[RMDB]
RNA sequence: GGGAACGACUCGAGUAGAGUCGAAAAUUAAAGCCAUUCGUGGCUUUAAACUCUGGUGUCCCGAAAACGCUCGUGCGCGAUCCCACGCGAACCAGUUUUCGAUUAAGGAUAAGUUCGCUUAUCCUAAUGAAGCAAUUGUGUUCGCACAAUUGCUUCAAAAAGAAACAACAACAACAAC
Reactivity to DMS in 0.01 (KOAc 150mM, MgCl2 10mM, bicine 150mM(pH8.5), 24C), signal-to-noise 1, nucleotides 027 to 126: u010u000a000a020a030g010c000c000a040u010u000c200g040u020g020g010c000u000u020u000a000a030a100c110u010c100u010g000g010u000g000u010c030c010c060g000a050a050a140a100c140g000c070u000c050g030u000g010c030g030c010g010a080u000c020c020c040a150c070g000c030g020a070a050c050c050a060g000u000u000u000u000c020g000a120u010u000a090a020g000g000a010u000a010a010g030u000u010c280g030c000u000u000a000u000c000c060u000a000a040